[RMDB]
RNA sequence: GGGAACGACUCGAGUAGAGUCGAAAAUGAAACUUUGUCCCAAAGCUACCCGGCAGGAUUACACUCCUCUUAUUUGUGAGAAAUGUAUCACAUACCCAUGGCUGAACCAGUCUCUAGCAAAGGAGACAGGGGACCAUCAUGAUUGGUUUAGACCAAACAUUAUAGCUGCAUUCGUGCAGCUAUAAUGAAAAGAAACAACAACAACAAC
Reactivity to 2A3 in 0.01 (KOAc 150mM, MgCl2 10mM, bicine 150mM(pH8.5), 24C), signal-to-noise 4, nucleotides 027 to 156: u100g010a060a050a010c050u060u090u100g050u060c020c010c050a040a000a020g020c020u040a030c010c020c050g030g000c020a020g000g050a010u080u130a050c060a040c060u050c040c010u050c070u090u180a180u100u210u050g040u040g000a020g050a030a180a050u200g040u070a060u040c010a000c000a040u090a090c000c020c030a070u050g020g000c020u030g000a020a020c000c000a010g020u010c000u000c010u030a030g080c050a080a090a080g050g000a010g010a020c020a010g010g000g000g010a010c040c000a030u110c000a070u120g060a110u030u040g030g000u040u060u040a030g040a070c000c020a020a030a040
Reactivity to DMS in 0.01 (KOAc 150mM, MgCl2 10mM, bicine 150mM(pH8.5), 24C), signal-to-noise 2, nucleotides 027 to 156: u010g010a150a050a120c040u000u000u000g040u000c020c010c000a170a240a120g030c040u000a030c040c060c040g040g070c050a120g000g010a140u000u000a030c030a040c010u000c040c010u000c020u020u000a110u020u010u000g040u000g000a030g000a030a040a030u010g010u010a070u010c030a080c020a130u000a110c030c000c070a110u010g000g060c040u000g000a050a080c000c020a100g010u000c000u000c020u020a100g060c190a100a130a190g010g000a050g050a050c010a050g050g010g000g000a110c020c050a070u000c040a070u000g010a060u000u010g020g020u000u000u000a050g000a110c040c010a060a070a230
Source: RMDB library OK3TST, as collected in RNAgym. An RNA of 207 nucleotides, treated with 2A3 and DMS and read out base by base. For DMS the reverse transcriptase was MarathonRT. Values cover nucleotides 27 to 156. The 2A3 profile rests on 2,372 reads.